Structure probing data (DMS and 2A3) for a 177-nucleotide construct. The 2A3 profile rests on 2,654 reads. Conditions: 150 mM KOAc, 10 mM MgCl2 and 150 mM bicine (pH 8.5), 24 C. For DMS the reverse transcriptase was MarathonRT. The DMS profile rests on 1,456 reads. High 2A3 reactivity points to a flexible backbone, as in loops and unpaired stretches. The data come from the RNA Mapping Database (RMDB), library TTRDEL.

RNA sequence: GGGAACGACUCGAGUAGAGUCGAAAAGAUAUGGACUACUACCCACCGCAAACUCGCGAAGAACUCGGAAACGAGGGAGCGACUAUGCGAGGUAGUCCUAAGUCAAAGAUUGGCUUCGGCCAAUCAACACAAAGUAUUGCUUCGGCAAUACUUUGUGAAAAGAAACAACAACAACAAC
Reactivity to DMS in 0.01 (KOAc 150mM, MgCl2 10mM, bicine 150mM(pH8.5), 24C), signal-to-noise 3, nucleotides 027 to 126: g020a050u000a070u010g010g010a010c000u000a000c000u000a150c020c010c000a300c130c010g000c040a020a070a140c300u000c000g030c000g000a060a110g010a120a110c000u000c000g010g010a060a100a120c030g000a000g000g010g000a050g000c000g010a000c030u000a200u000g020c000g000a070g050g040u000a010g000u000c010c010u020a020a120g000u010c140a070a120a080g000a010u010u000g000g000c000u010u010c160g030g010c000c000a000a000u000c020a100a230
Reactivity to 2A3 in 0.01 (KOAc 150mM, MgCl2 10mM, bicine 150mM(pH8.5), 24C), signal-to-noise 2, nucleotides 027 to 126: g060a040u220a180u250g000g020a010c000u020a000c010u180a200c020c020c000a020c030c000g000c010a000a000a110c000u000c000g040c050g220a300a110g050a070a020c010u000c000g030g000a060a080a060c020g000a000g020g040g000a030g050c010g010a010c020u040a040u070g000c000g010a000g000g020u000a010g010u000c000c000u030a070a020g110u060c070a170a030a120g000a030u020u010g010g010c020u110u110c300g090g040c020c000a000a010u000c010a010a000